RNA sequence: GGGAACGACUCGAGUAGAGUCGAAAAUGACAGUGGAAUGGUAAGGAAUUCAGGGAUCACAAAAACCUAAUAACAUCAGGGGAAGGUUGUUGUCCUAUUUGUCAGCUAAAGUCCCUUUGAGAUUUAAGCUCUCUUGCUAAUUCGUUAGCAAGAGAGCAAAAGAAACAACAACAACAAC
Reactivity to DMS in 0.01 (KOAc 150mM, MgCl2 10mM, bicine 150mM(pH8.5), 24C), signal-to-noise 2, nucleotides 027 to 126: u010g020a010c050a010g010u000g010g000a010a040u000g000g000u000a060a150g000g010a090a120u000u000c080a070g000g000g020a050u000c180a030c070a040a040a050a080a070c040c010u000a080a110u000a110a070c120a160u000c110a070g020g000g000g020a140a100g010g020u000u000g000u000u030g000u000c030c040u000a160u010u000u010g010u000c040a060g010c120u000a000a070a070g000u000c000c010c000u030u000u040g010a070g000a120u000u000u000a060a160